[RMDB]
RNA sequence: GGGAACGACUCGAGUAGAGUCGAAAAGAUAUGGAUCCGAACGAGAAGUGGUCGGAAACGACCAUACUUCGAUGAGUGGAUCCUAAGUCAAAACUUAGGGUCAGUAGUUCGCUACUGACCCUAAGAAGCUCAAUAAACUCUUCGGAGUUUAUUGAGCAAAAGAAACAACAACAACAAC
Reactivity to DMS in 0.01 (KOAc 150mM, MgCl2 10mM, bicine 150mM(pH8.5), 24C), signal-to-noise 1, nucleotides 027 to 126: g000a090u000a300u000g000g000a000u000c000c020g000a080a110c080g000a130g000a030a010g000u000g010g010u000c020g040g000a050a100a210c030g000a090c020c000a070u010a070c010u000u000c000g000a200u020g010a090g040u040g000g000a010u000c020c000u010a060a080g010u000c050a090a060a090a170c010u010u000a000g000g030g000u000c000a010g000u000a010g000u000u030c250g020c000u000a000c000u000g000a000c000c000c010u010a000a000g010a060a090